[RMDB]
RNA sequence: GGGAACGACUCGAGUAGAGUCGAAAAGUGUGACUGCUGGAAAAGCUUUUGUAAUAAAAGCGGCUCGAAAUGCCGGGUAUACAAGCAUUGAAAAUAAGUGGUUGGGUAUUGACUUCCUAGCCGAAGCGCUCCCGUACAUGUUCGCAUGUACGGGAGCAAAAGAAACAACAACAACAAC
Reactivity to 2A3 in 0.01 (KOAc 150mM, MgCl2 10mM, bicine 150mM(pH8.5), 24C), signal-to-noise 1, nucleotides 027 to 126: g100u080g000u000g000a030c000u000g000c000u020g040g130a000a040a000a000g000c000u000u130u000u000g040u110a090a010u090a080a050a000a000g000c000g000g000c070u070c170g050a000a070a220u080g000c000c000g000g000g050u250a130u170a300c030a100a090g090c060a090u050u070g070a000a000a000a000u250a000a170g070u090g120g020u000u050g010g000g010u030a090u100u290g120a070c100u000u030c000c000u000a000g000c000c000g000a090a000g180c030